[RMDB]
RNA sequence: GGGAACGACUCGAGUAGAGUCGAAAAACAAAGCAUGGCUAGAAGAUGCCACCGCGGAUAGAGCUGAGGUACUCUAGACUUCUAGCCAGAAGAAUUCCCAAACCGCGGAGAGUGCUCACGCAAAAAACUAACCUGUACGAUUCGUCGUACAGGUUAGAAAAGAAACAACAACAACAAC
Reactivity to 2A3 in 0.01 (KOAc 150mM, MgCl2 10mM, bicine 150mM(pH8.5), 24C), signal-to-noise 2, nucleotides 027 to 126: a000c060a040a090a000g100c020a050u020g030g000c000u010a000g000a000a000g020a080u100g070c090c030a030c020c000g000c010g010g020a070u060a130g080a020g030c160u130g120a050g110g110u060a030c000u000c010u040a050g010a110c010u000u020c000u030a000g010c060c010a000g000a010a000g000a000a070u030u010c020c010c000a020a030a020c000c000g030c000g020g010a020g010a000g020u040g020c000u040c060a030c050g140c120a080a050a040a040a020a020
Reactivity to DMS in 0.01 (KOAc 150mM, MgCl2 10mM, bicine 150mM(pH8.5), 24C), signal-to-noise 2, nucleotides 027 to 126: a060c200a070a090a040g010c040a230u000g010g000c000u000a010g000a040a010g000a160u010g010c130c070a140c020c040g020c010g000g000a250u000a060g000a020g010c050u000g010a090g020g030u010a070c010u010c010u010a070g010a100c000u000u010c000u000a000g000c010c000a010g000a040a160g030a090a110u000u000c000c000c000a050a130a160c020c030g000c000g040g000a100g040a050g000u020g020c040u000c100a050c160g000c090a000a020a020a080a060a050
Structure probing data (2A3 and DMS) for a 177-nucleotide construct. Source: RMDB library M2PK90, as collected in RNAgym. Reactivities are given for positions 27 through 126. Values are in units of 0.01, from 0 to 300, in steps of 10. 2A3 adducts were read by reverse transcription with SuperScript II with manganese.